[RMDB]
RNA sequence: GGGAACGACUCGAGUAGAGUCGAAAAAGAACGGAUUUAUUGAGAGUUUUAACGGACGCUUUCGCGAUGAAUGCCUGAAUGAACACUGGUUCAGUGACGUCAGUCAUGCCAGGAAAACCAUCAGUGAAUUACAGUUACGCUUCGGCGUAACUGUAAUAAAAGAAACAACAACAACAAC
Reactivity to DMS in 0.01 (KOAc 150mM, MgCl2 10mM, bicine 150mM(pH8.5), 24C), signal-to-noise 2, nucleotides 027 to 126: a080g030a100a040c020g020g000a220u000u000u000a060u010u010g000a060g000a260g000u000u000u010u000a090a180c150g010g030a110c120g000c080u000u010u000c060g010c020g020a100u000g010a040a050u000g010c030c000u010g040a030a090u000g010a080a050c090a080c050u000g000g000u020u010c070a060g030u000g000a070c020g020u000c140a030g010u000c000a030u000g010c010c010a050g000g010a050a040a090a050c060c030a120u000c020a020g000u000g000a050
Reactivity to 2A3 in 0.01 (KOAc 150mM, MgCl2 10mM, bicine 150mM(pH8.5), 24C), signal-to-noise 1, nucleotides 027 to 126: a000g100a060a000c030g020g070a070u070u130u080a040u040u290g020a110g010a010g070u000u100u120u140a100a040c120g060g050a010c010g010c040u060u110u050c020g020c030g040a040u100g100a070a010u030g070c020c000u040g040a120a070u010g040a100a020c080a000c040u020g120g120u250u180c050a000g000u010g020a020c030g000u040c020a000g000u030c010a020u030g050c020c010a000g020g000a000a070a000a070c000c010a030u050c010a040g020u030g190a040
The record gives the reactivity of an RNA of 177 nucleotides to DMS and 2A3.
The DMS profile rests on 1,238 reads.
It was measured as part of the RMDB library OK2TRN.
For 2A3, 796 sequencing reads were counted.
For 2A3 the reverse transcriptase was SuperScript II with manganese.